[RMDB]
RNA sequence: GGGAACGACUCGAGUAGAGUCGAAAAGCGCACUCUGUGUCACAUCGAUAUAUCCAGCCUCAUGUGAUGACAAUUUGUAAGCUUGCUAGAAUAAGGGGGAGCUUCGCUUAUCCAUGCGGCAACUAUCGGAUUCGCAGAUCUUCGGAUCUGCGAAUCCAAAAGAAACAACAACAACAAC
Reactivity to 2A3 in 0.01 (KOAc 150mM, MgCl2 10mM, bicine 150mM(pH8.5), 24C), signal-to-noise 1, nucleotides 027 to 126: g000c020g000c000a030c000u160c070u120g000u110g060u230c070a030c000a070u000c060g070a000u060a000u000a020u060c000c170a000g030c000c000u000c000a030u030g120u300g010a000u000g000a010c000a040a110u000u000u240g050u120a000a000g000c000u000u130g090c030u120a080g080a250a150u200a200a010g020g010g010g000g000a000g000c000u000u000c030g060c100u000u010a000u020c000c010a000u000g000c020g000g000c010a000a000c020u000a040u250c160

The data come from the RNA Mapping Database (RMDB), library RFM100. Structure probing data (2A3) for a 177-nucleotide construct. 2A3 adducts were read by reverse transcription with SuperScript II with manganese. The reactions ran in a buffer of 150 mM KOAc, 10 mM MgCl2 and 150 mM bicine (pH 8.5), at 24 C.